RNA sequence: GGGAACGACUCGAGUAGAGUCGAAAAUCUAUCGCCGGCAGGAUUGAACAACGCCGCCCACCCGCUCGACAAGGAUGGCCAUCUCAUAACCGAUCUGGCCGAUAUCGCAUCCGGUCGCGGCCAGCGCAUUACUGAUACCUUUCGAGGUAUCAGUAAUAAAAGAAACAACAACAACAAC
Reactivity to DMS in 0.01 (KOAc 150mM, MgCl2 10mM, bicine 150mM(pH8.5), 24C), signal-to-noise 8, nucleotides 027 to 126: u000c040u010a080u000c070g030c060c030g020g020c070a110g010g010a090u010u010g010a120a120c120a100a110c120g000c030c040g000c030c030c040a110c060c020c030g010c050u010c050g000a050c080a070a110g010g010a070u000g010g010c020c020a060u000c060u010c050a060u010a090a130c160c080g010a080u010c040u000g010g000c010c000g010a050u000a030u000c060g010c200a100u010c140c020g020g010u000c040g020c020g010g000c010c010a030g010c230g000c190
Reactivity to 2A3 in 0.01 (KOAc 150mM, MgCl2 10mM, bicine 150mM(pH8.5), 24C), signal-to-noise 5, nucleotides 027 to 126: u020c010u030a110u090c030g030c070c000g060g010c030a040g040g080a110u090u150g040a130a040c040a040a040c090g020c020c010g000c010c000c000a030c000c010c010g020c020u060c040g040a040c040a070a050g050g010a050u060g020g000c000c010a060u040c040u030c030a130u100a140a070c030c020g040a090u040c010u010g010g000c000c000g000a020u010a010u050c040g000c070a100u090c110c070g030g000u020c010g000c000g020g000c000c000a030g010c030g000c030

The record gives the reactivity of an RNA of 177 nucleotides to DMS and 2A3. Source: RMDB library OK2TST, as collected in RNAgym. The 2A3 profile rests on 9,933 reads. For 2A3 the reverse transcriptase was SuperScript II with manganese.